[RMDB]
Structure probing data (DMS) for a 177-nucleotide construct. The RNA was probed in 150 mM KOAc, 10 mM MgCl2 and 150 mM bicine (pH 8.5) at 24 C. The DMS profile rests on 1,363 reads.
RNA sequence: GGGAACGACUCGAGUAGAGUCGAAAAGGGGUUCGUGCUCCGCAAGCUGGGCGAGGUGGACGGGGUGCUCGCCCGCCUGCGCGACCUGGCGCACCUGCCGGAGGCGAGGCCCGGUCGGGUGGUGGUGUAUCAAUCACCGCUUCGGCGGUGAUUGAUAAAAAGAAACAACAACAACAAC
Reactivity to DMS in 0.01 (KOAc 150mM, MgCl2 10mM, bicine 150mM(pH8.5), 24C), signal-to-noise 1, nucleotides 027 to 126: g000g020g010g020u000u010c030g050u000g010c040u000c060c020g020c030a060a090g020c040u020g030g010g010c000g020a070g030g020u030g000g010a090c060g000g000g020g000u010g000c050u010c100g010c000c010c010g010c030c040u010g020c020g020c060g000a120c060c050u010g020g020c000g020c110a070c150c170u020g010c110c050g000g000a060g020g000c010g010a020g000g020c030c020c020g010g020u020c040g000g010g010u000g020g000u000g010g000u010g000